Source: RMDB library RFM100, as collected in RNAgym. Chemical mapping of a 177-nucleotide RNA with 2A3 and DMS. The RNA was probed in 150 mM KOAc, 10 mM MgCl2 and 150 mM bicine (pH 8.5) at 24 C.
RNA sequence: GGGAACGACUCGAGUAGAGUCGAAAAGCCCGGAAAGCGCGAAGUGUAAUCAAUGAGUAAAGCAAAUCUCAAGCCAUAAAUUGGUAAUUCCUUCUUCUUCAACGGUUUGGACGAGCCGACUCGCUUCACCCAUCUCCUUCUUCGGAAGGAGAUGGGUAAAAGAAACAACAACAACAAC
Reactivity to 2A3 in 0.01 (KOAc 150mM, MgCl2 10mM, bicine 150mM(pH8.5), 24C), signal-to-noise 2, nucleotides 027 to 126: g030c000c000c000g020g040a200a080a020g140c090g000c040g080a060a020g100u080g000u290a050a080u030c050a070a150u060g000a020g050u070a010a120a050g070c080a080a130a190u050c020u000c000a000a100g000c000c000a140u170a210a140a110u090u030g040g010u070a050a150u070u030c000c000u000u020c000u040u000c000u070u060c030a060a000c040g070g030u080u000u090g100g060a040c030g020a010g000c010c000g030a050c010u030c080g010c040u020u020c000
Reactivity to DMS in 0.01 (KOAc 150mM, MgCl2 10mM, bicine 150mM(pH8.5), 24C), signal-to-noise 1, nucleotides 027 to 126: g040c050c040c000g040g010a080a120a000g070c130g000c010g000a020a030g020u010g040u000a120a020u010c070a110a010u000g020a110g000u000a020a190a270g060c030a130a110a020u000c000u050c000a040a060g000c020c000a150u040a030a250a070u030u020g010g000u000a070a090u000u020c060c000u000u000c030u030u020c050u000u010c090a030a280c100g030g010u000u020u000g040g000a060c030g000a200g000c020c060g020a070c070u020c000g000c020u000u000c240
The DMS profile rests on 926 reads. DMS adducts were read by reverse transcription with MarathonRT.